[RMDB]
Conditions: 150 mM KOAc, 10 mM MgCl2 and 150 mM bicine (pH 8.5), 24 C. This 177-nucleotide RNA was probed chemically with DMS. Reactivities are given for positions 27 through 126. The DMS profile rests on 675 reads.

RNA sequence: GGGAACGACUCGAGUAGAGUCGAAAACAGGCCAGCAGCCAUCAAGUGGAAAUCGCGGUCGGGAUAGCGGAGCCAAGAUACAAAGACUCAGCGAUUCGCUGACAGAGGAGAACUCGAAUGCCUCCAGUGCAUGAUACGCGUUCGCGCGUAUCAUGCAAAAAGAAACAACAACAACAAC
Reactivity to DMS in 0.01 (KOAc 150mM, MgCl2 10mM, bicine 150mM(pH8.5), 24C), signal-to-noise 1, nucleotides 027 to 126: c060a090g030g020c010c010a090g030c030a140g000c050c050a100u000c080a050a150g020u000g010g000a050a070a100u000c030g040c020g030g000u030c050g030g000g000a080u010a050g000c030g000g010a050g050c000c050a050a030g000a220u000a060c210a050a080a190g010a050c060u000c030a080g000c000g000a150u010u000c080g040c050u000g000a020c080a080g000a050g000g000a170g000a100a100c040u000c040g010a060a090u000g020c060c010u000c070c110a080g000